[RMDB]
The record gives the reactivity of an RNA of 177 nucleotides to 2A3 and DMS. It was measured as part of the RMDB library OK2TST. The reactions ran in a buffer of 150 mM KOAc, 10 mM MgCl2 and 150 mM bicine (pH 8.5), at 24 C. Values cover nucleotides 27 to 126. The 2A3 profile rests on 3,696 reads. 2A3 adducts were read by reverse transcription with SuperScript II with manganese.

RNA sequence: GGGAACGACUCGAGUAGAGUCGAAAAUGCAAGCGUUACUUGAAUUGGUUUAAGCUUUGCCAGCUAUUAACAUUUCUGCAACCUCAAGUAGGAAGGGAAAAAGGAUGCUUUGGAAACGCACGGCAACGAUUUCCAUGACAUUCGUGUCAUGGAAAUCAAAAGAAACAACAACAACAAC
Reactivity to 2A3 in 0.01 (KOAc 150mM, MgCl2 10mM, bicine 150mM(pH8.5), 24C), signal-to-noise 4, nucleotides 027 to 126: u100g010c020a020a020g030c020g040u070u090a110c080u060u080g060a100a070u130u100g050g010u050u040u090a030a000g000c000u070u010u040g020c020c000a000g000c000u040a090u300u070a120a030c020a060u080u100u000c040u140g010c020a030a040c000c010u020c050a070a160g050u090a030g230g080a040a050g040g020g040a030a060a020a000a020g050g020a030u080g000c000u080u110u140g040g010a040a080a000c040g000c040a070c070g030g000c030a010a020c050
Reactivity to DMS in 0.01 (KOAc 150mM, MgCl2 10mM, bicine 150mM(pH8.5), 24C), signal-to-noise 4, nucleotides 027 to 126: u010g000c050a040a020g020c040g020u010u010a090c050u010u000g010a070a110u000u010g020g020u000u000u010a080a060g010c020u000u000u010g030c070c120a170g010c020u000a080u020u000a050a080c070a130u000u000u000c030u000g010c070a080a220c060c020u000c040a060a100g010u000a040g030g010a060a190g000g010g010a030a020a050a060a040g010g020a050u000g010c030u000u000u000g010g010a070a070a110c150g010c040a070c200g000g000c050a040a110c160